Source information:
An RNA of 177 nucleotides, treated with 2A3 and DMS and read out base by base.
RNA sequence: GGGAACGACUCGAGUAGAGUCGAAAAGAAAGAAAGCCGAAGCAGCCAAAGAGGUCAAACGUCAGUAUAUCGGGCGUAAAUACUACCUUAUGCAGAAAGCCGACCUUAAUGUCGUAAAGAAAGAAAACAUCCAUUAUACUUUCGAGUAUAAUGGAUGAAAAGAAACAACAACAACAAC
Reactivity to 2A3 in 0.01 (KOAc 150mM, MgCl2 10mM, bicine 150mM(pH8.5), 24C), signal-to-noise 7, nucleotides 027 to 126: g110a020a100a010g090a060a060a000g000c000c010g010a020a010g000c030a000g000c040c040a050a070a030g060a010g020g010u050c050a150a070a020c000g010u010c010a030g060u030a120u020a080u300c050g030g020g000c010g010u040a040a070a020u180a050c040u040a030c000c010u040u010a040u120g010c010a010g100a080a020a010g020c010c000g020a030c010c000u130u160a150a050u170g030u050c010g020u070a050a120a030g130a040a070a000g100a010a070a030a000
Reactivity to DMS in 0.01 (KOAc 150mM, MgCl2 10mM, bicine 150mM(pH8.5), 24C), signal-to-noise 7, nucleotides 027 to 126: g000a090a080a070g010a090a170a120g000c030c040g000a140a100g000c030a070g000c090c060a060a130a150g000a020g010g010u010c140a060a080a060c060g030u000c010a020g010u020a120u040a070u030c090g000g030g020c080g000u010a050a090a080u030a070c150u010a040c030c010u000u010a050u000g010c050a040g010a070a080a080g010c080c050g020a130c040c040u010u020a050a090u030g000u000c010g000u000a050a060a090g000a080a040a090g000a070a070a070a130
For DMS, 14,665 sequencing reads were counted. Source: RMDB library OK1LIB, as collected in RNAgym. 2A3 adducts were read by reverse transcription with SuperScript II with manganese. Values are in units of 0.01, from 0 to 300, in steps of 10. The 2A3 profile rests on 9,428 reads. For DMS the reverse transcriptase was MarathonRT.